[RMDB]
RNA sequence: GGGAACGACUCGAGUAGAGUCGAAAAACGCAAACCUGUGAGUGGACACCCGCUUUAUUCACUGGGGACGACAACUCUGGGGAGAAAAGGGAGGAUCGGAUGGGAAGAGUAUAUCCUACGGGAAUCCGUCGGUCAACGUUCGCGUUGACCAAAAGAAACAACAACAACAAC
Reactivity to 2A3 in 0.01 (KOAc 150mM, MgCl2 10mM, bicine 150mM(pH8.5), 24C), signal-to-noise 5, nucleotides 027 to 129: a000c090g000c040a040a060a050c000c000u070g000u060g060a020g010u040g020g000a000c000a110c060c010c030g010c000u090u100u080a170u080u090c050a040c130u040g000g000g000g000a040c030g010a030c010a090a030c050u020c040u080g000g010g010g000a020g000a000a050a020a010g020g010g010a020g000g020a020u000c020g000g030a010u060g040g010g000a060a000g020a020g030u020a010u010a000u090c010c010u030a010c020g040g000g000a020a100u050c020c010g050u050c070
Reactivity to DMS in 0.01 (KOAc 150mM, MgCl2 10mM, bicine 150mM(pH8.5), 24C), signal-to-noise 3, nucleotides 027 to 129: a040c120g030c060a060a120a090c060c050u020g010u010g010a030g070u020g030g010a000c100a100c060c000c060g030c110u000u000u000a100u040u040c120a130c100u050g000g010g000g040a140c170g060a040c160a070a110c100u000c060u080g000g000g000g000a000g030a010a020a030a000g000g000g000a120g030g010a050u000c070g000g000a120u050g030g000g020a040a080g030a040g040u050a000u040a080u030c020c040u040a060c060g000g000g000a040a060u060c020c020g040u010c170